[RMDB]
RNA sequence: GGGAACGACUCGAGUAGAGUCGAAAAUGACCGCUCAAGAUUACGGAUACUUUGUCAGUAAUCAAUUUAUGUUUUAAUAAAUAAUUUGAGCUAGGGCCUGACGGACAGCCGGGUCAAAUGCCAAAAACGAGUAGGAGCUCUUCGGAGCUUCUACUCGAAAAGAAACAACAACAACAAC
Reactivity to DMS in 0.01 (KOAc 150mM, MgCl2 10mM, bicine 150mM(pH8.5), 24C), signal-to-noise 1, nucleotides 027 to 126: u010g000a050c040c040g030c030u000c010a040a030g000a020u000u010a010c000g020g020a030u000a180c080u050u020u040g010u010c010a020g000u000a000a010u010c010a110a010u000u000u000a000u000g000u010u100u040u080a220a030u000a060a000a000u000a080a100u110u000u000g010a010g000c020u000a110g000g010g000c060c050u010g040a130c160g000g020a100c060a190g040c010c000g020g000g000u010c000a020a110a040u020g010c000c010a070a030a080a040a160
Reactivity to 2A3 in 0.01 (KOAc 150mM, MgCl2 10mM, bicine 150mM(pH8.5), 24C), signal-to-noise 3, nucleotides 027 to 126: u100g020a010c000c000g000c000u020c020a030a030g000a000u010u010a000c000g010g000a020u020a090c110u140u140u250g000u000c000a010g010u010a000a020u000c010a000a000u020u030u040a050u000g020u000u240u040u050a080a030u050a030a010a040u110a040a110u020u020u050g010a010g000c040u070a040g030g030g020c020c000u040g040a010c030g040g020a020c020a010g070c000c000g000g010g000u000c000a030a000a070u110g010c000c000a000a000a000a000a040